[RMDB]
RNA sequence: GGGAACGACUCGAGUAGAGUCGAAAAACAAUCCAUUGCACAUAAACCAGAGUGCUGUAGUUAUAACCCACCUCACCAGGAACUUUUGGUGUUAGCUCGCAUUGGAUGCCUGCAGAUAGGGUGACAAUACGCCACUAAGCUUCGGCUUAGUGGCGUAAAAAGAAACAACAACAACAAC
Reactivity to DMS in 0.01 (KOAc 150mM, MgCl2 10mM, bicine 150mM(pH8.5), 24C), signal-to-noise 1, nucleotides 027 to 126: a080c190a180a050u020c040c000a040u010u010g030c090a100c070a120u000a200a150a050c040c050a070g000a050g000u000g010c000u000g010u000a040g000u000u010a110u010a130a160c050c050c000a100c250c040u010c080a010c170c110a030g000g000a120a040c040u000u000u000u000g000g000u010g000u000u000a050g010c160u000c100g000c040a000u000u000g040g010a050u000g010c000c040u000g010c060a020g000a120u000a040g020g010g050u000g000a090c070a020a110
This 177-nucleotide RNA was probed chemically with DMS. The RNA was probed in 150 mM KOAc, 10 mM MgCl2 and 150 mM bicine (pH 8.5) at 24 C. The data come from the RNA Mapping Database (RMDB), library OK2TST.